[RMDB]
RNA sequence: GGGAACGACUCGAGUAGAGUCGAAAACGGCGGCAAAGCACAGCAGCAGCAGUUCAGCGUUGCGCCGAGUCGGCAACGGGGGCGUUACGGCCACCGGCGCUUGCAGUCGUGUCGUCAUGCCGCCGCCUCCAGUCGCAAGUUUCGACUUGCGACUGGAAAAAGAAACAACAACAACAAC
Reactivity to 2A3 in 0.01 (KOAc 150mM, MgCl2 10mM, bicine 150mM(pH8.5), 24C), signal-to-noise 4, nucleotides 027 to 126: c000g000g010c000g000g000c000a040a110a060g000c000a020c020a020g050c010a020g000c010a000g000c000a050g050u180u140c070a020g040c080g120u120u070g010c000g000c010c000g010a100g040u060c050g010g020c030a070a050c050g030g000g000g040g000c020g160u180u170a070c070g070g030c010c000a000c010c000g000g000c000g000c030u010u080g000c020a000g050u180c080g030u060g030u040c050g130u080c010a060u020g000c010c010g000c000c000g000c000c000
Reactivity to DMS in 0.01 (KOAc 150mM, MgCl2 10mM, bicine 150mM(pH8.5), 24C), signal-to-noise 1, nucleotides 027 to 126: c040g000g010c000g050g010c000a030a160a170g050c070a020c020a050g000c010a130g010c040a280g000c060a030g000u020u000c110a080g000c000g020u000u000g000c040g030c090c050g040a080g020u000c020g020g000c010a020a010c010g010g010g010g020g000c000g000u050u040a130c130g000g000c020c020a140c040c010g020g000c060g020c000u000u050g000c020a100g000u000c100g020u000g000u060c080g020u070c140a300u010g000c000c000g000c000c000g000c030c110